RNA sequence: GGGAACGACUCGAGUAGAGUCGAAAAUAUUAUAGCGCACUAAAGACGCUGAUCUUUAGUUACCAAGGAACUUUAGUGCUGAGGUCCGAGUUGCAAGGUCCCAUGUCGGACCUUAGCACUAAUUGAAACUGAGUAUCUGGUUCGCCAGAUACUCAGUAAAAGAAACAACAACAACAAC
Reactivity to DMS in 0.01 (KOAc 150mM, MgCl2 10mM, bicine 150mM(pH8.5), 24C), signal-to-noise 1, nucleotides 027 to 126: u000a050u000u020a110u010a120g000c090g040c200a070c000u010a020a010a010g000a000c020g030c210u010g000a090u000c000u000u010u010a020g000u020u000a110c140c120a090a080g000g000a070a110c080u000u000u000a010g000u000g000c000u000g000a000g000g000u000c000c000g010a220g010u010u020g040c090a040a070g000g000u010c000c020c000a090u020g020u000c000g000g010a020c000c000u000u000a000g000c000a010c000u000a000a000u010u020g020a090a080
Reactivity to 2A3 in 0.01 (KOAc 150mM, MgCl2 10mM, bicine 150mM(pH8.5), 24C), signal-to-noise 1, nucleotides 027 to 126: u070a030u130u300a300u120a150g090c100g000c050a070c070u030a010a010a000g030a010c080g020c300u110g070a140u010c020u010u000u010a020g030u040u100a070c080c120a110a050g160g000a110a140c010u030u000u000a030g000u020g000c020u010g010a000g000g000u000c010c000g000a010g050u090u140g140c030a030a020g020g030u000c020c020c000a020u090g120u030c000g020g000a000c020c000u000u000a000g000c030a000c000u060a000a000u000u020g020a050a020
The data come from the RNA Mapping Database (RMDB), library M2PK90. Structure probing data (DMS and 2A3) for a 177-nucleotide construct. The 2A3 profile rests on 808 reads. For 2A3 the reverse transcriptase was SuperScript II with manganese. As a SHAPE reagent, 2A3 marks flexible, mostly unpaired nucleotides at the ribose 2'-OH.